An RNA of 177 nucleotides, treated with DMS and 2A3 and read out base by base. It was measured as part of the RMDB library TTRDEL. The DMS profile rests on 7,012 reads. DMS adducts were read by reverse transcription with MarathonRT. Values cover nucleotides 27 to 126.
[RMDB]
RNA sequence: GGGAACGACUCGAGUAGAGUCGAAAAGAUAUGGAGAUACGACAUGAAGGCUGUCGGAAACGACAGGUCCUUCAACAGCGUACUCCUAAGUCAAACUCGGAUUAAUACUUCGGUAUUAAUCCGAGAACCAAUUAAUCAACUUCGGUUGAUUAAUUGGAAAAGAAACAACAACAACAAC
Reactivity to DMS in 0.01 (KOAc 150mM, MgCl2 10mM, bicine 150mM(pH8.5), 24C), signal-to-noise 5, nucleotides 027 to 126: g010a040u000a300u010g010g010a010g000a160u000a000c010g000a080c100a240u000g000a020a010g020g000c010u000g010u000c000g000g010a080a070a170c010g010a010c000a010g000g010u010c000c010u000u000c000a020a080c270a160g000c010g000u000a010c000u000c000c000u010a030a080g000u000c030a070a070a200c000u000c000g000g000a010u000u000a010a000u000a010c000u000u010c200g030g000u000a010u000u000a000a000u000c000c000g000a000g000a030a140
Reactivity to 2A3 in 0.01 (KOAc 150mM, MgCl2 10mM, bicine 150mM(pH8.5), 24C), signal-to-noise 5, nucleotides 027 to 126: g030a030u080a050u120g020g010a010g030a090u010a010c050g120a050c130a100u140g000a000a000g020g010c010u000g000u000c010g020g020a060a060a010c010g000a000c000a000g030g130u100c000c000u000u000c010a020a010c050a010g060c000g000u010a000c000u010c000c000u010a190a030g040u040c050a090a030a130c010u010c000g000g000a000u000u010a000a000u000a010c010u030u090c300g120g000u010a000u000u000a000a010u000c000c000g000a000g000a000a000